[RMDB]
RNA sequence: GGGAACGACUCGAGUAGAGUCGAAAAGCAAAAUAAGCGAGCAAAGGUAACAGCCGCAAAUGGACACAAAAUAGUUGGAACAAGAGCAGAGGAUCGCAAAAACCACCAUAAAAAUAAGACUGGUUUCGACCGGUCAAAAGAAACAACAACAACAAC
Reactivity to 2A3 in 0.01 (KOAc 150mM, MgCl2 10mM, bicine 150mM(pH8.5), 24C), signal-to-noise 1, nucleotides 027 to 135: g040c020a020a040a090a220u300a200a020g030c010g060a020g060c040a100a060a080g060g030u110a020a040c010a070g030c000c000g050c030a010a040a090u300g060g000a050c040a000c060a130a110a120a000u170a120g160u000u020g050g000a000a000c030a150a040g030a030g100c010a000g010a020g000g030a070u080c040g020c110a090a040a010a020a040c040c070a020c000c000a010u170a050a080a040a000a010u130a060a000g000a010c000u010g000g010u000u000u060c030g010a000c020c000g010g000u010c000a000

This 155-nucleotide RNA was probed chemically with 2A3. The data come from the RNA Mapping Database (RMDB), library P90LIB. Reactivities are given for positions 27 through 135. The RNA was probed in 150 mM KOAc, 10 mM MgCl2 and 150 mM bicine (pH 8.5) at 24 C. 2A3 is a SHAPE reagent: it acylates the 2'-hydroxyl of flexible nucleotides of all four kinds.